[RMDB]
RNA sequence: GGGAACGACUCGAGUAGAGUCGAAAAAAGCAGUAGCAUAGCUGAUCCUCCGUGCAUCGCCCAUGUGCUACGGUAAGGGUCUCACUUUAAGUGGGCUACACUAAAUAAUCUCCGUCUGGGGUUAGUUAGAAGAGCUUAAUCAGACUAGCUGAAUGGAUCCUUUAUGAGGGUUCGCCCUCAUAAAGGAAAAAGAAACAACAACAACAAC
Reactivity to 2A3 in 0.01 (KOAc 150mM, MgCl2 10mM, bicine 150mM(pH8.5), 24C), signal-to-noise 1, nucleotides 027 to 156: a010a010g030c020a010g050u160a000g140c110a220u070a040g010c060u040g020a070u030c010c010u000c000c000g010u000g020c010a030u000c030g000c010c010c010a000u030g000u000g010c050u150a020c000g000g010u030a090a050g000g010g020u010c030u050c030a100c040u150u190u270a080a040g010u000g000g000g000c030u020a000c030a000c030u000a010a010a010u050a020a020u020c010u000c020c040g090u000c030u080g050g000g000g000u020u000a000g000u000u020a040g000a190a010g010a050g020c050u110u250a030a010u070c000a000g000a010c010u050a090g110c080u060g050a110a080u080g050g030a030
Reactivity to DMS in 0.01 (KOAc 150mM, MgCl2 10mM, bicine 150mM(pH8.5), 24C), signal-to-noise 1, nucleotides 027 to 156: a040a020g000c010a100g000u000a120g000c030a100u010a120g040c000u030g000a070u010c020c020u000c020c050g020u000g020c020a040u010c080g020c060c070c040a110u010g030u020g000c020u010a030c020g030g000u000a100a080g010g010g040u000c030u010c100a060c190u000u010u010a020a060g080u000g020g000g020c030u000a160c090a290c000u030a000a040a020u000a000a010u000c010u000c010c240g000u000c040u000g010g020g030g000u010u000a000g030u040u000a020g010a090a080g000a300g020c070u020u000a050a050u010c010a090g010a050c010u000a130g020c020u000g010a100a100u020g020g010a280
The record gives the reactivity of an RNA of 207 nucleotides to 2A3 and DMS. For 2A3 the reverse transcriptase was SuperScript II with manganese. It was measured as part of the RMDB library ARCHII. 2A3 is a SHAPE reagent: it acylates the 2'-hydroxyl of flexible nucleotides of all four kinds. For DMS the reverse transcriptase was MarathonRT. For DMS, 1,711 sequencing reads were counted.